[RMDB]
RNA sequence: GGGAACGACUCGAGUAGAGUCGAAAAGAAGCGCCCAUAGCUCAAUUGGAUAGAGUGUCUGGCUUCGGACCAGAAGGUUAUGGGUUCAAGUCCUAUUGGGCGCGCCAAAUUAUUGAUUCCAACCAACGUAAAGAGAAGUGUUCGCACUUCUCUUUACAAAAGAAACAACAACAACAAC
Reactivity to DMS in 0.01 (KOAc 150mM, MgCl2 10mM, bicine 150mM(pH8.5), 24C), signal-to-noise 5, nucleotides 027 to 126: g010a180a300g000c010g000c010c010c010a020u000a030g010c020u000c010a040a020u020u020g020g010a300u010a020g000a040g010u000g000u000c020u000g000g000c010u000u020c230g000g020a180c010c000a030g000a020a020g010g000u010u000a010u010g000g000g000u000u000c010a040a300g000u000c000c010u000a040u000u000g000g010g030c000g020c010g000c250c090a010a100a130u010u000a100u000u000g000a190u000u000c020c010a120a150c150c090a060a120c240
Reactivity to 2A3 in 0.01 (KOAc 150mM, MgCl2 10mM, bicine 150mM(pH8.5), 24C), signal-to-noise 2, nucleotides 027 to 126: g060a130a030g000c000g000c000c000c000a020u020a020g000c000u010c010a040a070u240u230g080g070a090u130a110g000a010g020u040g000u020c030u010g000g000c000u080u130c180g020g020a070c000c010a000g020a030a010g030g010u070u040a010u030g000g000g000u000u010c010a000a000g010u010c000c010u020a010u010u020g000g000g010c000g010c000g000c000c020a040a090a010u200u110a070u050u150g100a130u040u090c020c010a040a070c060c010a030a030c160